Record summary
Conditions: 150 mM KOAc, 10 mM MgCl2 and 150 mM bicine (pH 8.5), 24 C. Chemical mapping of a 177-nucleotide RNA with DMS and 2A3.
[RMDB]
RNA sequence: GGGAACGACUCGAGUAGAGUCGAAAAAGAACUAGCGAUUGUAAAAGGCUGUUUGCGCUAAGAUAUGGAAUUAGCGCAAAUAGGUCCGAAUUCCUUGAUAACAUUUCGGACAACCGCGCAAAAACAACUAAUCUAAGAAGUUCGCUUCUUAGAUUAGAAAAGAAACAACAACAACAAC
Reactivity to DMS in 0.01 (KOAc 150mM, MgCl2 10mM, bicine 150mM(pH8.5), 24C), signal-to-noise 4, nucleotides 027 to 126: a110g020a120a100c120u010a090g020c010g010a040u000u000g000u000a050a080a210a100g000g000c000u000g020u000u000u000g000c000g010c000u010a000a020g010a140u010a210u030g010g010a090a140u000u010a010g010c000g000c000a010a000a000u000a000g020g000u000c000c000g000a030a060u000u000c070c100u000u010g020a080u010a110a130c160a090u000u000u000c020g000g000a020c020a020a020c030c020g000c030g010c230a040a080a100a060a030c120a070a090
Reactivity to 2A3 in 0.01 (KOAc 150mM, MgCl2 10mM, bicine 150mM(pH8.5), 24C), signal-to-noise 3, nucleotides 027 to 126: a010g060a040a010c030u020a040g010c010g030a030u040u070g030u070a040a060a070a030g120g040c010u010g000u010u010u020g000c020g010c000u010a000a010g010a140u260a130u300g120g020a060a120u000u010a010g000c000g000c000a010a000a000u000a000g000g010u010c000c000g010a000a030u050u060c030c000u050u110g060a050u050a140a050c050a120u040u040u030c010g000g000a000c000a010a010c020c010g010c000g000c040a040a110a020a000a060c010a030a040
Reactivities are given for positions 27 through 126. The data come from the RNA Mapping Database (RMDB), library M2PK90.